Chemical mapping of a 177-nucleotide RNA with DMS and 2A3. The reactions ran in a buffer of 150 mM KOAc, 10 mM MgCl2 and 150 mM bicine (pH 8.5), at 24 C. The 2A3 profile rests on 9,467 reads.
[RMDB]
RNA sequence: GGGAACGACUCGAGUAGAGUCGAAAAGAAAGAUACUGAGUGGUGCUUUCUAGGACUGUCCAACCUGAGAAUGUUGGUUUAAGGCUCAAUCUCAGGUUCGUCAGCCCAUGAAACGCCAACUCGCUAACGAGUAGAAUGCAUUCGUGCAUUCUACUCGAAAAGAAACAACAACAACAAC
Reactivity to DMS in 0.01 (KOAc 150mM, MgCl2 10mM, bicine 150mM(pH8.5), 24C), signal-to-noise 3, nucleotides 027 to 126: g010a040a120a100g000a100u020a090c100u040g000a020g040u000g000g000u000g000c210u000u000u000c000u000a300g000g010a030c000u000g010u010c030c050a020a020c000c000u000g010a010g000a050a090u000g000u040u020g030g020u000u010u020a080a120g020g010c000u000c070a080a040u000c000u000c010a000g030g000u000u000c300g010u000c000a000g000c010c000c000a220u000g000a000a010a010c020g000c000c000a020a060c010u000c020g030c130u020a110a180
Reactivity to 2A3 in 0.01 (KOAc 150mM, MgCl2 10mM, bicine 150mM(pH8.5), 24C), signal-to-noise 8, nucleotides 027 to 126: g120a010a080a000g100a030u180a130c130u150g000a000g000u000g010g000u020g010c220u000u000u010c010u020a090g000g010a030c000u000g010u000c010c030a000a000c000c000u010g000a010g020a060a100u150g070u190u140g150g050u110u190u180a070a060g190g010c010u010c070a030a060u010c020u000c000a000g000g000u000u010c000g010u000c000a000g000c000c000c000a010u050g000a000a000a010c000g000c000c000a030a130c000u000c010g010c020u040a090a020